Structure probing data (2A3 and DMS) for a 177-nucleotide construct.
For DMS, 1,508 sequencing reads were counted.
2A3 adducts were read by reverse transcription with SuperScript II with manganese.
Conditions: 150 mM KOAc, 10 mM MgCl2 and 150 mM bicine (pH 8.5), 24 C.
Reactivities are given for positions 27 through 126.
RNA sequence: GGGAACGACUCGAGUAGAGUCGAAAAGCGUGUUCCACGCAGGCUUUUGUCUUGAACGAUUUACCAUAGAAUAACAAAUUUAUGAUUUUGUGUCUUUGUUUGUUCGGACACAUUAUCUAUACGAAUAUGUCUGGCUAUUAUUCGUAAUAGCCAGACAAAAAGAAACAACAACAACAAC
Reactivity to 2A3 in 0.01 (KOAc 150mM, MgCl2 10mM, bicine 150mM(pH8.5), 24C), signal-to-noise 4, nucleotides 027 to 126: g000c150g120u000g060u140u160c170c000a070c040g010c010a020g130g010c020u060u010u010u110g040u000c000u050u200g130a040a020c070g020a080u000u040u190a150c000c000a070u080a120g240a250a140u250a120a040c100a100a070a160u140u210u100a130u170g000a000u000u010u000u010g000u000g000u000c010u010u070u040g100u030u030u010g040u060u050c010g010g000a000c000a000c000a000u000u000a000u000c030u040a110u070a160c180g080a080a020u100a050
Reactivity to DMS in 0.01 (KOAc 150mM, MgCl2 10mM, bicine 150mM(pH8.5), 24C), signal-to-noise 1, nucleotides 027 to 126: g000c060g000u000g000u020u010c110c290a100c250g050c000a090g000g020c080u000u050u000u000g010u000c000u070u010g010a070a140c120g000a000u010u000u030a050c000c020a050u110a130g000a150a100u110a160a090c100a030a040a060u000u030u040a030u000g000a000u000u000u000u000g000u000g080u000c000u000u040u030g010u000u000u010g000u000u000c040g000g010a020c000a020c000a000u000u000a010u000c000u000a060u020a100c190g020a040a040u000a060